[RMDB]
RNA sequence: GGGAACGACUCGAGUAGAGUCGAAAAAAAGACCAACAUAUCCACACACCAAACUGUUUGAUUCACAUCACACCCAAAUACAAACGGUUUAAAAAAGAGGAUGCUUUCAAAAUUUCAAGGUAACAAAAUAGAAGUUGUAUUUCGAUACAACUUCUAUAAAAGAAACAACAACAACAAC
Reactivity to DMS in 0.01 (KOAc 150mM, MgCl2 10mM, bicine 150mM(pH8.5), 24C), signal-to-noise 4, nucleotides 027 to 126: a070a040a110g000a150c020c030a070a080c150a070u020a110u000c020c020a050c050a070c070a070c120c060a070a040a030c020u000g000u010u010u000g040a130u000u010c060a040c090a050u020c040a070c060a080c020c010c030a050a050a040u000a130c070a020a030a040c080g000g020u000u000u000a000a060a060a100a070a050g010a060g010g020a020u000g010c060u000u000u010c070a050a060a040a050u020u000u020c050a050a050g010g000u000a060a050c080a050a030a060
Reactivity to 2A3 in 0.01 (KOAc 150mM, MgCl2 10mM, bicine 150mM(pH8.5), 24C), signal-to-noise 7, nucleotides 027 to 126: a010a000a000g080a010c020c010a030a060c030a050u120a030u020c010c000a020c000a000c000a010c050c060a060a020a030c000u020g010u070u030u050g050a050u100u070c050a020c030a110u050c000a040c010a040c050c030c020a050a100a050u210a070c020a000a060a010c030g010g080u030u040u110a130a170a030a000a000a010g110a020g050g010a020u030g030c030u070u100u070c070a130a180a140a190u100u160u080c070a090a040g060g030u090a090a070c030a070a120a030